Chemical mapping of a 207-nucleotide RNA with DMS and 2A3.
The RNA was probed in 150 mM KOAc, 10 mM MgCl2 and 150 mM bicine (pH 8.5) at 24 C.
It was measured as part of the RMDB library M2RFPK.
For 2A3 the reverse transcriptase was SuperScript II with manganese.

[RMDB]
RNA sequence: GGGAACGACUCGAGUAGAGUCGAAAAGCCACAUAUCCCGUGACACUGCGAAAGCAAGGCUGGCGGUAGGUAGUCCUGGGCGGCGACAGCCUUGGACUGCGGCGUAAAGGUGUACCUGGGGCCGUUAUAACGCGGUAACAGUUCGCUGUUACCGCAACGUAAGAAUCUACUUCGGUAGAUUCUUACGAAAAGAAACAACAACAACAAC
Reactivity to DMS in 0.01 (KOAc 150mM, MgCl2 10mM, bicine 150mM(pH8.5), 24C), signal-to-noise 1, nucleotides 027 to 156: g000c040c010a050c060a090u010a180u000c080c020c010g010u020g000a120c050a080c030u000g010c000g000a160a110a130g020c020a060a040g020g000c050u000g050g010c040g010g030u000a070g030g040u000a070g010u010c000c000u000g010g010g010c020g020g040c050g040a120c160a210g030c050c000u020u000g040g000a040c010u010g000c090g010g010c040g040u000a030a060a090g020g030u020g010u000a090c040c010u030g010g020g040g020c020c030g040u000u010a060u000a130a130c150g000c000g000g000u000a010a010c010a030g010u000u000c210g030c010u000g030u000u000a010c000c000g010c010a000a010
Reactivity to 2A3 in 0.01 (KOAc 150mM, MgCl2 10mM, bicine 150mM(pH8.5), 24C), signal-to-noise 3, nucleotides 027 to 156: g050c030c000a020c000a050u130a020u070c000c000c020g020u000g020a050c060a000c030u090g000c020g050a140a010a010g030c090a060a050g010g020c060u010g060g000c020g040g010u080a100g040g080u020a010g000u040c000c020u010g010g000g040c020g020g080c100g070a050c080a020g000c010c000u000u010g000g000a010c010u010g000c000g040g000c020g010u100a090a070a040g050g010u080g040u080a070c010c020u030g000g000g050g020c020c010g000u040u060a110u040a270a060c120g020c000g030g010u010a010a010c000a010g030u060u060c130g040c050u020g000u010u000a000c040c000g020c000a000a000